An RNA of 177 nucleotides, treated with DMS and 2A3 and read out base by base.
For 2A3 the reverse transcriptase was SuperScript II with manganese.
2A3 is a SHAPE reagent: it acylates the 2'-hydroxyl of flexible nucleotides of all four kinds.
The DMS profile rests on 2,813 reads.
The reactions ran in a buffer of 150 mM KOAc, 10 mM MgCl2 and 150 mM bicine (pH 8.5), at 24 C.
[RMDB]
RNA sequence: GGGAACGACUCGAGUAGAGUCGAAAACAGGUGCCCGUCGUCGCGAUCUCGCGCAGCUUGCCGGCGAGGUCGGCGCCGAUCGUCGGGAUAUCGUCGAGGCUGCGGCCGGCCGCGAUCAGCGCGCCGAACGAGGGAUUACGUUCGCGUAAUCCCUCGUAAAAGAAACAACAACAACAAC
Reactivity to DMS in 0.01 (KOAc 150mM, MgCl2 10mM, bicine 150mM(pH8.5), 24C), signal-to-noise 3, nucleotides 027 to 126: c130a170g010g030u010g000c020c040c100g000u000c140g000u000c000g000c010g010a030u000c020u010c160g010c040g000c040a050g010c050u010u010g030c170c020g010g010c000g000a030g000g000u010c010g010g000c010g020c230c150g000a080u000c020g010u000c020g020g010g010a140u000a050u000c050g010u000c050g000a080g020g000c010u000g010c020g000g000c010c070g010g000c050c020g030c030g010a040u010c060a130g010c130g020c080g010c040c030g000a100
Reactivity to 2A3 in 0.01 (KOAc 150mM, MgCl2 10mM, bicine 150mM(pH8.5), 24C), signal-to-noise 1, nucleotides 027 to 126: c060a060g000g050u020g040c000c030c020g030u110c050g020u010c000g040c010g020a050u040c040u050c020g060c030g030c000a010g030c000u060u130g170c080c030g050g030c000g010a010g000g040u040c020g000g000c000g030c090c040g080a240u230c020g020u000c020g000g000g130a200u080a140u100c020g000u000c010g010a010g000g050c010u060g020c040g100g060c040c020g000g010c000c010g000c000g010a030u060c040a030g010c010g000c000g000c080c020g010a010